[RMDB]
RNA sequence: GGGAACGACUCGAGUAGAGUCGAAAAACGUAACACCUGUAAUCAAGAAACCAAAGGUCCUUACUGUUCUGGUGUCUCUAAGGUAAUCAAGAGUGAUAAAUUUCUAUGAAGAAAAAAGCAGAGGACGCUAGUAUCCUUCUUUCGAGAAGGAUACUAGAAAAGAAACAACAACAACAAC
Reactivity to DMS in 0.01 (KOAc 150mM, MgCl2 10mM, bicine 150mM(pH8.5), 24C), signal-to-noise 4, nucleotides 027 to 126: a090c090g000u000a100a050c060a040c020c000u020g010u010a100a100u010c090a080a130g000a120a130a090c060c040a050a070a090g000g000u000c020c000u000u020a110c040u000g000u010u000c040u000g010g010u000g010u010c020u000c030u000a060a060g010g010u020a090a080u010c100a060a060g000a060g000u000g020a130u010a050a080a130u000u000u000c020u000a180u000g020a090a090g000a010a060a080a110a100a060g000c060a040g030a070g000g000a020c050g010
Reactivity to 2A3 in 0.01 (KOAc 150mM, MgCl2 10mM, bicine 150mM(pH8.5), 24C), signal-to-noise 3, nucleotides 027 to 126: a010c010g020u050a060a000c020a020c030c010u020g110u160a010a080u080c070a050a050g050a110a170a050c020c030a110a050a000g070g030u010c000c010u070u160a140c020u010g050u100u050c030u100g060g000u020g030u030c000u000c010u100a180a170g090g000u080a090a090u160c060a080a030g030a010g090u050g030a070u130a120a160a070u080u040u000c080u080a230u240g090a060a220g000a060a090a030a020a030a000g030c010a000g020a030g030g000a010c000g010